The record gives the reactivity of an RNA of 177 nucleotides to DMS and 2A3. The reactions ran in a buffer of 150 mM KOAc, 10 mM MgCl2 and 150 mM bicine (pH 8.5), at 24 C. 2A3 is a SHAPE reagent: it acylates the 2'-hydroxyl of flexible nucleotides of all four kinds. It was measured as part of the RMDB library OK2TRN. DMS adducts were read by reverse transcription with MarathonRT.

RNA sequence: GGGAACGACUCGAGUAGAGUCGAAAAUGGUAGCAAGCAGCAGCUAGUCAAUAGCGUGGUUAAACGCUUUAUAGGGAGCUAUGCAAAUCUGAAAAUUGUUGCUUUCUAUUUAAAUGAAGACGCCGGAAUUCUUAUAAAGGUUCGCCUUUAUAAGAAUAAAAGAAACAACAACAACAAC
Reactivity to DMS in 0.01 (KOAc 150mM, MgCl2 10mM, bicine 150mM(pH8.5), 24C), signal-to-noise 4, nucleotides 027 to 126: u020g010g010u000a020g010c070a030a050g010c020a040g020c040a050g020c040u000a040g010u000c040a090a100u010a070g020c010g020u000g020g010u010u020a110a130a060c040g000c030u000u000u010a060u010a110g020g010g020a130g010c010u000a020u010g010c020a050a070a090u030c160u000g010a090a100a080a110u010u000g010u000u000g000c020u000u010u000c000u000a020u000u000u010a040a080a110u000g000a080a100g020a090c160g030c050c040g010g000a090
Reactivity to 2A3 in 0.01 (KOAc 150mM, MgCl2 10mM, bicine 150mM(pH8.5), 24C), signal-to-noise 1, nucleotides 027 to 126: u120g000g000u010a000g020c020a010a000g000c040a000g000c030a000g000c010u030a000g120u060c000a030a100u020a050g000c000g000u020g000g040u180u150a110a300a000c020g000c000u070u130u070a150u080a040g050g010g060a010g010c000u010a000u130g000c010a060a080a080u070c070u130g130a010a080a130a120u080u040g040u010u010g000c000u000u000u000c000u000a090u050u150u030a120a210a060u080g030a070a020g060a010c060g110c100c050g000g030a000